[RMDB]
Conditions: 150 mM KOAc, 10 mM MgCl2 and 150 mM bicine (pH 8.5), 24 C. Structure probing data (DMS and 2A3) for a 207-nucleotide construct. For 2A3 the reverse transcriptase was SuperScript II with manganese. DMS adducts were read by reverse transcription with MarathonRT.
RNA sequence: GGGAACGACUCGAGUAGAGUCGAAAAGACGUGGAGGUCUCGCGCCCUCCUUUGCGCGUAAGUACGUCGAAAUUCGGUGCUGUGGAUCGCACCGUAUGAUCCAUUAGAUAUCCGCUUUGUGCCGCGGUUGGGCAUUUACACUUACCCGAAAGGGGAAAGUAGCCAUUAAUUUCGAUUAAUGGCUACUAAAAGAAACAACAACAACAAC
Reactivity to DMS in 0.01 (KOAc 150mM, MgCl2 10mM, bicine 150mM(pH8.5), 24C), signal-to-noise 4, nucleotides 027 to 156: g000a060c040g020u000g000g020a060g040g020u000c030u010c080g030c090g020c170c010c020u000c020c020u000u020u000g020c020g010c050g010u000a060a100g020u000a050c070g030u000c040g010a070a090a140u000u000c010g040g030u000g020c030u000g000u010g010g010a080u000c080g010c060a230c080c090g030u000a010u010g000a090u010c020c020a100u010u010a060g010a150u010a080u000c020c020g020c070u000u000u000g030u000g030c040c030g010c040g000g020u000u010g010g040g010c050a070u000u000u000a100c100a070c060u010u000a200c000c030c000g000a050a100a180g010g010g020g000a050a040
Reactivity to 2A3 in 0.01 (KOAc 150mM, MgCl2 10mM, bicine 150mM(pH8.5), 24C), signal-to-noise 5, nucleotides 027 to 156: g010a000c030g010u050g020g050a060g020g070u030c020u060c060g020c010g010c020c020c000u140c020c040u100u110u110g020c030g000c010g000u060a070a050g070u050a020c040g020u020c050g040a050a050a040u110u090c020g000g000u010g000c010u060g010u110g150g040a050u070c030g000c010a050c050c010g000u020a050u050g030a020u010c010c010a040u050u140a050g060a080u080a060u090c020c000g020c040u080u100u120g060u050g020c020c020g060c030g050g040u080u050g070g000g010c020a010u040u030u110a030c040a010c010u050u120a050c010c010c010g040a060a030a010g040g000g000g010a060a030